[RMDB]
RNA sequence: GGGAACGACUCGAGUAGAGUCGAAAAAUUACCGGGGUCGCCGACGUGACAUGGCUGGAUUGUCUUGGCAUUCCAACGGUUCAGGCGGUGCGCCCGGCAUCGCUGACGUUGUCGGUCAGCCAGGGCAUAUCCCCAGGGUGUUCGCACCCUGGGGAUAAAAAGAAACAACAACAACAAC
Reactivity to DMS in 0.01 (KOAc 150mM, MgCl2 10mM, bicine 150mM(pH8.5), 24C), signal-to-noise 1, nucleotides 027 to 126: a080u020u000a050c080c010g010g020g000g040u000c170g050c030c030g000a020c060g010u000g020a110c040a100u010g010g000c080u020g020g000a090u010u010g000u010c040u010u000g020g000c000a140u000u000c050c030a000a000c000g000g000u000u000c080a100g020g020c000g000g040u000g010c040g030c050c010c060g000g020c030a000u000c020g030c010u000g000a030c020g020u000u010g030u020c150g030g000u000c190a120g020c000c020a010g000g000g000c110a090
Chemical mapping of a 177-nucleotide RNA with DMS. Conditions: 150 mM KOAc, 10 mM MgCl2 and 150 mM bicine (pH 8.5), 24 C. Source: RMDB library OK2TST, as collected in RNAgym.